[RMDB]
RNA sequence: GGGAACGACUCGAGUAGAGUCGAAAAGCGUGACGCCCAGCGGGUCGUUCAGCACCAUCCCGAUCGUGAACGACCCCCAGACCCGCAUGGAGGCCGAGGAGGCCGUCAGGGCGGGCACGGCCGUGGAGGUGCCCUGCUAAUUCGUUAGCAGGGCACCAAAAGAAACAACAACAACAAC
Reactivity to DMS in 0.01 (KOAc 150mM, MgCl2 10mM, bicine 150mM(pH8.5), 24C), signal-to-noise 1, nucleotides 027 to 126: g000c160g030u030g020a020c200g000c000c000c020a200g070c210g040g000g030u000c000g000u000u000c000a070g000c060a120c040c070a040u000c010c000c000g000a070u020c040g000u010g010a060a000c030g000a060c010c000c000c000c100a140g000a110c000c000c040g000c010a100u020g080g000a120g000g010c000c000g020a150g000g000a300g000g080c000c000g000u000c000a040g050g040g020c000g020g000g030c000a120c150g000g000c110c070g000u000g000g000a260
Reactivity to 2A3 in 0.01 (KOAc 150mM, MgCl2 10mM, bicine 150mM(pH8.5), 24C), signal-to-noise 1, nucleotides 027 to 126: g060c050g050u010g010a030c010g070c020c010c040a000g050c140g000g000g000u000c050g000u020u020c000a010g100c070a060c050c060a050u080c040c020c000g010a140u150c060g070u030g030a000a000c000g020a020c010c000c000c020c000a090g020a160c000c000c000g030c000a000u030g060g060a020g010g000c020c000g000a060g220g070a040g040g010c010c000g010u000c000a000g090g000g000c000g000g010g000c000a000c030g010g010c000c010g060u070g010g090a150